[RMDB]
RNA sequence: GGGAACGACUCGAGUAGAGUCGAAAAAGCGAGCUUAAUCCAAGUACCUCGUCUCAAAUUGAGUGUCAAGUGAAUAAGCAUAGUGACCCCAUCGUUUCAGGGUAGUUGACGGCUAUUAAUAGACAUACUCUUAUACUGUGUUCGCACAGUAUAAGAGAAAAGAAACAACAACAACAAC
Reactivity to DMS in 0.01 (KOAc 150mM, MgCl2 10mM, bicine 150mM(pH8.5), 24C), signal-to-noise 5, nucleotides 027 to 126: a100g000c020g000a080g000c020u010u010a020a040u000c010c010a210a100g010u060a030c030c010u010c010g000u050c160u040c290a070a080a130u040u050g000a030g020u050g020u000c030a150a050g020u040g010a030a040u010a010a040g010c010a040u060a110g000u000g000a070c060c000c000c040a090u030c050g020u000u000u010c050a090g000g000g020u010a040g020u010u000g000a070c120g010g000c050u000a030u020u020a080a090u020a050g000a080c120a070u040a140
Reactivity to 2A3 in 0.01 (KOAc 150mM, MgCl2 10mM, bicine 150mM(pH8.5), 24C), signal-to-noise 9, nucleotides 027 to 126: a000g050c030g030a010g000c010u030u040a030a020u070c020c010a080a040g040u070a050c020c000u020c020g120u040c080u060c170a190a260a160u200u260g010a020g020u300g030u080c050a130a060g050u090g300a040a030u060a070a000g000c010a040u150a070g050u080g050a070c000c010c010c000a060u110c060g030u020u060u060c030a040g010g030g060u040a060g040u030u070g100a060c040g040g000c020u020a040u130u120a120a140u090a110g060a020c020a030u100a070